An RNA of 177 nucleotides, treated with DMS and 2A3 and read out base by base. The RNA was probed in 150 mM KOAc, 10 mM MgCl2 and 150 mM bicine (pH 8.5) at 24 C.

[RMDB]
RNA sequence: GGGAACGACUCGAGUAGAGUCGAAAACAACACGUACGGACAGAAGUGUACGUCUAAGUGCGUAGGUAUUGGAACUGUAGGCAAAUCCGCAGAUCUAGCUGAAACAUGAGUGAUAACCGCGUCUUCGAAGAUCUAAAGUUUUCGAACUUUAGAUCUUAAAAGAAACAACAACAACAAC
Reactivity to DMS in 0.01 (KOAc 150mM, MgCl2 10mM, bicine 150mM(pH8.5), 24C), signal-to-noise 9, nucleotides 027 to 126: c070a110a110c130a040c040g010u010a030c030g000g010a080c080a080g010a090a100g020u010g010u010a030c080g010u000c060u010a080a270g010u000g000c020g010u000a140g000g010u010a070u020u010g000g010a040a060c030u010g010u000a080g020g010c140a060a100a110u020c020c020g000c030a040g010a060u000c030u000a070g000c020u010g010a110a090a050c050a020u000g000a080g010u000g000a060u010a070a140c040c030g000c150g000u000c020u000u000c160g000
Reactivity to 2A3 in 0.01 (KOAc 150mM, MgCl2 10mM, bicine 150mM(pH8.5), 24C), signal-to-noise 9, nucleotides 027 to 126: c020a000a020c020a000c040g050u060a010c030g050g160a030c040a110g160a180a050g150u080g030u150a030c030g020u000c030u100a140a050g010u020g020c010g010u010a030g030g000u070a170u140u140g020g010a040a030c010u020g030u090a200g070g000c080a060a050a110u110c010c010g000c000a010g000a040u000c010u020a020g010c010u010g020a040a030a000c020a030u070g010a030g090u080g040a060u060a090a020c020c020g040c040g070u000c010u060u030c030g030